[RMDB]
RNA sequence: GGGAACGACUCGAGUAGAGUCGAAAAUUUACGGUAUUCGUACCGUAAACGAGCAUGCAAGCAGCGCAACGAGACAAGACGAUAAUAAGAUCGAGCAUGCUGAUAGUAGGAUCUUCGGAUCCUACAAAUCUAACGUUCAAUUCGUUGAACGUUAGAUAAAAGAAACAACAACAACAAC
Reactivity to 2A3 in 0.01 (KOAc 150mM, MgCl2 10mM, bicine 150mM(pH8.5), 24C), signal-to-noise 9, nucleotides 027 to 126: u010u000u000a000c000g000g000u010a020u020u090c200g040u030a010c000c000g000u000a000a010a000c040g020a010g000c010a000u020g000c020a030a120g010c050a040g060c070g020c100a080a070c080g070a020g040a140c060a080a050g070a050c040g030a030u060a210a060u130a190a120g100a150u070c040g010a020g000c010a010u020g000c010u030g040a070u070a140g000u000a000g000g000a000u000c000u020u020c210g090g000a000u000c000c000u000a000c000a000a010
Reactivity to DMS in 0.01 (KOAc 150mM, MgCl2 10mM, bicine 150mM(pH8.5), 24C), signal-to-noise 9, nucleotides 027 to 126: u000u000u000a000c010g000g010u000a010u000u010c190g020u000a010c000c000g010u000a000a010a030c160g010a050g010c020a020u000g010c020a140a140g020c120a080g000c090g010c090a070a070c090g000a110g000a080c100a060a080g010a110c050g010a050u010a060a090u010a090a110g000a060u000c030g010a200g010c010a020u000g010c010u000g000a080u000a090g010u000a000g000g000a010u000c000u000u010c190g010g010a010u000c000c000u000a000c000a030a070